[RMDB]
RNA sequence: GGGAACGACUCGAGUAGAGUCGAAAAGAUAUGGAUGUGUAGUGGAGCUACUGUUCGGAAACGAACAGAAUAGCUAUGAAGCUACUGCAUCCUAAGUCAAACCGGAAUCCCUUCGGGGAUUCCGGAACGUUAUGUUCUAGUUCGCUAGAACAUAACGAAAAGAAACAACAACAACAAC
Reactivity to DMS in 0.01 (KOAc 150mM, MgCl2 10mM, bicine 150mM(pH8.5), 24C), signal-to-noise 5, nucleotides 027 to 126: g000a010u010a030u010g000g010a010u000g010u000g020u000a000g020u000g000g010a010g030c000u000a070c000u000g000u010u000c010g020g010a010a000a020c000g020a010a000c000a010g000a130a150u000a010g020c000u010a300u010g010a170a290g010c000u000a000c010u010g010c000a010u000c000c000u000a010a070g000u000c000a090a160a220c010c010g000g010a030a000u000c000c000c000u000u010c280g030g010g020g000a010u000u000c000c000g000g000a020a020
Reactivity to 2A3 in 0.01 (KOAc 150mM, MgCl2 10mM, bicine 150mM(pH8.5), 24C), signal-to-noise 4, nucleotides 027 to 126: g000a000u020a010u060g000g000a010u010g030u000g000u030a010g020u020g040g060a020g010c000u010a000c000u030g010u000u000c010g000g010a010a010a000c010g010a010a000c030a010g020a120a250u150a020g000c000u070a300u140g010a000a000g020c000u010a010c030u050g020c000a010u000c000c000u000a000a000g010u000c000a010a050a170c000c000g000g000a000a010u000c020c010c000u030u090c300g100g010g000g000a000u000u000c000c000g020g000a010a000